Chemical mapping of a 177-nucleotide RNA with 2A3 and DMS. 2A3 adducts were read by reverse transcription with SuperScript II with manganese. DMS adducts were read by reverse transcription with MarathonRT. For DMS, 1,025 sequencing reads were counted. Conditions: 150 mM KOAc, 10 mM MgCl2 and 150 mM bicine (pH 8.5), 24 C. Reactivities are rounded to 0.1 and cut off at 0 and 3.
[RMDB]
RNA sequence: GGGAACGACUCGAGUAGAGUCGAAAACGUCGGUGGGCACCACGAACAACGCGGGGCGUAGCUUGCCGGUUUUGGCUUCCUCGCUGCGGCCCACGACCAGCACCGCCUGCGCCUGGUCGAUGCCAGACGUAGCACGUGCUUUCGAGCACGUGCUACGAAAAGAAACAACAACAACAAC
Reactivity to 2A3 in 0.01 (KOAc 150mM, MgCl2 10mM, bicine 150mM(pH8.5), 24C), signal-to-noise 1, nucleotides 027 to 126: c020g020u020c020g000g000u060g020g000g000c010a100c100c030a040c030g110a150a070c030a050a010c060g000c020g000g010g020g000c070g090u010a050g020c070u050u030g020c000c060g030g030u130u060u060u160g000g000c010u050u030c000c000u010c040g000c000u030g050c010g030g000c000c010c010a020c000g000a040c000c000a020g060c010a050c000c030g130c000c020u050g010c010g040c000c010u020g030g000u040c080g000a150u180g040c030c010a040g000a100
Reactivity to DMS in 0.01 (KOAc 150mM, MgCl2 10mM, bicine 150mM(pH8.5), 24C), signal-to-noise 2, nucleotides 027 to 126: c090g000u000c020g010g030u030g000g000g010c100a130c080c050a120c080g020a080a130c180a120a140c210g000c050g030g000g000g000c300g050u000a080g000c050u010u000g010c000c040g010g030u000u030u000u000g000g010c010u000u000c110c000u000c080g000c000u000g000c050g000g000c010c030c000a070c000g020a050c020c060a090g000c070a080c050c070g000c080c080u000g030c050g030c080c010u000g000g030u000c080g060a050u000g010c020c000a050g010a140